[RMDB]
RNA sequence: GGGAACGACUCGAGUAGAGUCGAAAAGUCGAGUUCGCUCGACAAAACUGUUGAAAUUUAGUAGGGGGCUGUUAUAUUAUGGUCUUCAUUUCAUCAUUAUUAAACCAAAGGUUCACUUCGGUGAACCCCUUCUAUCUUUGUUCGCAAAGAUAGAAGGAAAAGAAACAACAACAACAAC
Reactivity to DMS in 0.01 (KOAc 150mM, MgCl2 10mM, bicine 150mM(pH8.5), 24C), signal-to-noise 2, nucleotides 027 to 126: g020u000c010g000a040g000u010u010c230g030c010u000c000g010a020c000a060a060a100a100c230u010g020u000u000g000a030a030a030u000u010u010a120g010u020a180g000g020g000g000g000c030u000g010u010u000a090u020a150u010u010a020u010g010g010u000c000u000u000c010a060u000u000u000c010a010u000c010a080u010u010a080u000u010a080a100a130c040c050a040a090a090g010g000u000u000c000a020c000u000u020c190g030g000u000g000a010a000c000c010
Reactivity to 2A3 in 0.01 (KOAc 150mM, MgCl2 10mM, bicine 150mM(pH8.5), 24C), signal-to-noise 4, nucleotides 027 to 126: g000u000c010g000a000g000u010u120c200g030c070u000c000g010a000c000a010a060a010a000c010u030g010u010u010g050a030a030a120u230u300u300a290g070u260a160g060g020g000g020g000c010u020g020u080u050a150u000a030u300u090a030u060g000g000u010c000u020u020c030a020u000u010u030c000a030u010c020a020u050u160a070u070u210a230a110a040c020c010a120a100a030g020g010u000u000c000a000c000u020u060c180g040g000u000g010a000a000c010c000

Source information
An RNA of 177 nucleotides, treated with DMS and 2A3 and read out base by base. The reactions ran in a buffer of 150 mM KOAc, 10 mM MgCl2 and 150 mM bicine (pH 8.5), at 24 C. 2A3 adducts were read by reverse transcription with SuperScript II with manganese.